[RMDB]
RNA sequence: GGGAACGACUCGAGUAGAGUCGAAAAAGCGUAGCGGUACGCCGCUAAGCAAGGCGCAUUUGAACUGUAUUGUACGCCUUGCAUAAAGCAAAAGUACUAAAAAAACGUGCCGUUACGACGGCACGAAAAAACAUCCAUUGGUUCGCCAAUGGAUGAACAAACAGGAAAGGUUCGCCUUUCCUGUUUGAAAAGAAACAACAACAACAAC
Reactivity to DMS in 0.01 (KOAc 150mM, MgCl2 10mM, bicine 150mM(pH8.5), 24C), signal-to-noise 2, nucleotides 027 to 156: a020g000c000g030u000a050g020c010g020g000u000a050c040g030c130c020g040c040u000a070a160g020c000a020a020g010g000c010g020c010a060u000u010u010g020a100a220c090u010g000u000a300u020u000g030u000a040c000g000c010c000u000u000g020c030a050u000a030a110a160g020c070a080a080a110a120g000u000a090c020u010a000a030a060a100a070a080a150c020g040u000g000c010c000g000u000u010a070c190g040a060c000g020g020c000a020c030g000a020a030a040a100a030a070c000a000u000c000c000a010u000u000g010g010u030u010c300g040c030c000a000a000u000g000g010a000u000g000a010a090
Reactivity to 2A3 in 0.01 (KOAc 150mM, MgCl2 10mM, bicine 150mM(pH8.5), 24C), signal-to-noise 6, nucleotides 027 to 156: a000g080c020g010u020a000g010c010g010g010u020a020c130g040c040c000g000c000u030a070a010g000c010a000a000g000g000c010g020c070a100u090u090u240g160a210a130c130u150g080u300a110u190u090g030u060a040c020g000c000c000u000u000g000c010a020u110a020a060a000g010c030a040a030a060a040g070u090a070c160u290a020a070a010a020a030a020a020c010g000u000g000c010c000g010u010u030a040c160g020a010c010g000g010c040a000c020g020a050a010a000a000a000a010c000a000u000c000c000a000u000u010g020g000u040u050c120g010c110c000a000a000u000g000g000a000u000g000a010a010

Chemical mapping of a 207-nucleotide RNA with DMS and 2A3. For DMS, 4,707 sequencing reads were counted. For 2A3 the reverse transcriptase was SuperScript II with manganese. The RNA was probed in 150 mM KOAc, 10 mM MgCl2 and 150 mM bicine (pH 8.5) at 24 C.